[RMDB]
RNA sequence: GGGAACGACUCGAGUAGAGUCGAAAACACCGGCUGCCGCAGAGCGUUUGAUCAGCUCCUGGCGGAAGAACUCCUGAAACUGGAUGGACUCCACGCCCCAAACCAGGCAGCGAUAGACCUUCUGGAAUUCGAUGAUCUGGCUGAUCUGUCGGUCGGGGUCCCACGUUAUAUUCGUAUAACGUGGGACAAAAGAAACAACAACAACAAC
Reactivity to 2A3 in 0.01 (KOAc 150mM, MgCl2 10mM, bicine 150mM(pH8.5), 24C), signal-to-noise 2, nucleotides 027 to 156: c040a020c000c000g000g000c020u050g060c060c100g000c050a000g020a010g050c000g020u020u050u100g070a030u030c040a040g000c000u050c020c020u060g030g030c000g030g000a040a030g020a000a000c040u070c040c010u050g070a230a180a190c040u060g000g020a040u070g020g030a050c050u040c090c040a080c080g060c000c010c020c050a000a050a050c030c000a020g050g010c040a010g000c000g020a010u030a000g040a030c000c010u180u180c050u090g000g070a090a050u150u040c070g040a060u070g000a030u050c000u030g070g010c030u020g050a070u020c030u040g070u080c000g000g000u010c010g000g020g040
This 207-nucleotide RNA was probed chemically with 2A3.
The data come from the RNA Mapping Database (RMDB), library OK3TST.
Reactivities are given for positions 27 through 156.
Conditions: 150 mM KOAc, 10 mM MgCl2 and 150 mM bicine (pH 8.5), 24 C.